[RMDB]
RNA sequence: GGGAACGACUCGAGUAGAGUCGAAAAUCAGCAAAUUUUAUGCUAAUGUACUUGUAAACACGAUCGUAUAGUGCUAUCACUCGUGUCCAUGUAUGUGUGUACUUCAAUAGCGCUACUGUCAGCCAACCACGGUAGGGUAUUUCGAUACCCUACCGUGAAAAGAAACAACAACAACAAC
Reactivity to DMS in 0.01 (KOAc 150mM, MgCl2 10mM, bicine 150mM(pH8.5), 24C), signal-to-noise 2, nucleotides 027 to 126: u010c030a030g000c040a050a100a100u040u010u030u020a030u020g000c000u000a100a060u000g020u000a040c070u000u010g000u010a160a070a070c110a000c030g000a030u020c240g040u000a040u020a010g020u020g040c070u000a060u010c070a060c050u000c030g000u000g010u010c090c030a100u030g000u020a030u010g000u000g000u020g000u010a030c030u020u040c110a070a100u020a040g000c100g000c020u000a000c070u020g000u000c020a180g030c030c040a100a090c160
Reactivity to 2A3 in 0.01 (KOAc 150mM, MgCl2 10mM, bicine 150mM(pH8.5), 24C), signal-to-noise 7, nucleotides 027 to 126: u140c040a000g080c050a020a060a130u180u150u100u100a180u160g010c020u080a080a050u080g030u050a050c030u060u080g040u150a050a100a000c050a010c040g030a060u110c100g040u100a030u070a130g140u150g110c050u050a060u190c030a030c060u020c010g040u010g020u030c070c000a030u060g050u090a040u080g120u040g030u020g010u040a060c050u020u080c070a060a150u040a050g060c040g020c050u080a070c030u040g090u100c010a010g030c050c020a030a030c040